[RMDB]
RNA sequence: GGGAACGACUCGAGUAGAGUCGAAAAUUGCACGGGGAGCGGCACAUUUGGCCUUUGACGAAGGCCAUGAAGGAGGUGUAUUACCACAGGAUGUAACUUUCACACUGUUUGAUUCUGGUUCAAGUGCUACUAAAGGAGGCAGUCGCACCGGUGCAUCUCUCAGUGCACCAUUCGUGGUGCACUGAGAAAAAGAAACAACAACAACAAC
Reactivity to 2A3 in 0.01 (KOAc 150mM, MgCl2 10mM, bicine 150mM(pH8.5), 24C), signal-to-noise 2, nucleotides 027 to 156: u040u060g050c020a000c020g010g010g000g000a090g000c020g010g020c060a050c030a170u010u070u040g030g000c000c040u000u030u080g110a070c110g050a000a000g010g000c010c010a010u070g040a010a010g110g020a060g030g000u090g000u060a090u070u160a040c070c050a030c030a070g050g000a060u020g020u090a040a020c030u040u110u120c080a070c020a010c070u060g030u130u070u090g050a060u000u050c010u030g050g030u040u020c040a030a010g030u020g100c010u060a040c070u100a040a080a130g090g000a050g020g000c020a000g010u010c010g000c000a000c000c030g020g000u000g010c030a060u010c030